RNA sequence: GGGAACGACUCGAGUAGAGUCGAAAACGACGGCGUCGCGGCCGUCUACGACAUCGCGGUUGCGCGUCGGCGCCGACCCGCUUGAGCGGUCCCCGACGCGUCAACGUCGCGCCGGCUGCCCGGUAAACCCUUGAUAGUAGUUCGCUACUAUCAAGGGAAAAGAAACAACAACAACAAC
Reactivity to DMS in 0.01 (KOAc 150mM, MgCl2 10mM, bicine 150mM(pH8.5), 24C), signal-to-noise 2, nucleotides 027 to 126: c140g010a030c000g000g010c000g030u020c280g040c260g010g000c080c030g020u000c020u000a020c080g010a040c060a080u010c090g000c010g010g010u000u010g000c000g020c000g020u000c020g000g000c220g000c220c090g000a050c080c020c070g010c120u000u010g000a130g000c030g000g010u000c000c050c000c010g010a010c000g020c010g000u010c040a000a010c020g010u010c060g000c050g000c240c020g000g010c080u000g000c020c010c000g020g000u000a070a100a210
Reactivity to 2A3 in 0.01 (KOAc 150mM, MgCl2 10mM, bicine 150mM(pH8.5), 24C), signal-to-noise 2, nucleotides 027 to 126: c030g030a000c000g000g040c020g030u140c060g010c040g120g050c070c030g000u000c000u020a020c050g060a030c020a070u100c040g000c030g000g000u030u000g000c020g040c000g000u010c020g000g010c060g100c030c040g020a050c060c070c030g020c070u210u300g100a080g070c040g060g000u010c020c000c000c000g000a030c010g020c020g090u040c010a000a020c020g130u080c010g000c000g020c020c010g020g000c070u120g050c030c000c000g000g020u110a150a090a060
This 177-nucleotide RNA was probed chemically with DMS and 2A3.
For 2A3, 2,734 sequencing reads were counted.
For DMS the reverse transcriptase was MarathonRT.